Record summary
Chemical mapping of a 177-nucleotide RNA with 2A3 and DMS. It was measured as part of the RMDB library TTRDES. For DMS the reverse transcriptase was MarathonRT.
RNA sequence: GGGAACGACUCGAGUAGAGUCGAAAAGAUAUGGAGAUUUCAAGGGAGUCGGUGGUCGGAAACGACCACCCGACUUUGAUCUUGGAUCUCCUAAGUCAAAAUCUCCACAAGGUUCGCCUUGUGGAGACAAACGUUUAGUCUUCGGACUAAACGUUUGAAAAGAAACAACAACAACAAC
Reactivity to 2A3 in 0.01 (KOAc 150mM, MgCl2 10mM, bicine 150mM(pH8.5), 24C), signal-to-noise 2, nucleotides 027 to 126: g020a020u030a030u100g050g000a020g020a030u070u300u300c020a030a000g000g060g070a120g120u000c030g010g000u000g010g010u020c000g000g000a030a050a020c000g000a000c000c000a000c000c020c010g000a000c030u110u100u170g090a060u000c000u000u000g030g000a000u010c000u000c010c000u000a050a000g010u010c020a070a000a050a300u020c000u010c000c000a000c000a010a010g060g040u130u200c270g260c140c000u000u000g010u000g020g010a000g000a000
Reactivity to DMS in 0.01 (KOAc 150mM, MgCl2 10mM, bicine 150mM(pH8.5), 24C), signal-to-noise 2, nucleotides 027 to 126: g000a020u030a200u020g000g000a040g010a010u000u010u010c010a010a030g010g000g010a010g020u000c010g000g020u000g010g010u000c000g000g010a060a060a090c000g000a030c000c010a000c190c070c040g020a010c010u000u000u020g000a110u000c010u000u000g000g000a010u000c000u000c000c000u000a000a060g020u000c020a110a080a130a190u010c000u000c010c000a000c000a010a010g000g020u000u010c300g020c010c000u000u000g010u010g000g010a000g000a010
For 2A3 the reverse transcriptase was SuperScript II with manganese. Reactivities are rounded to 0.1 and cut off at 0 and 3.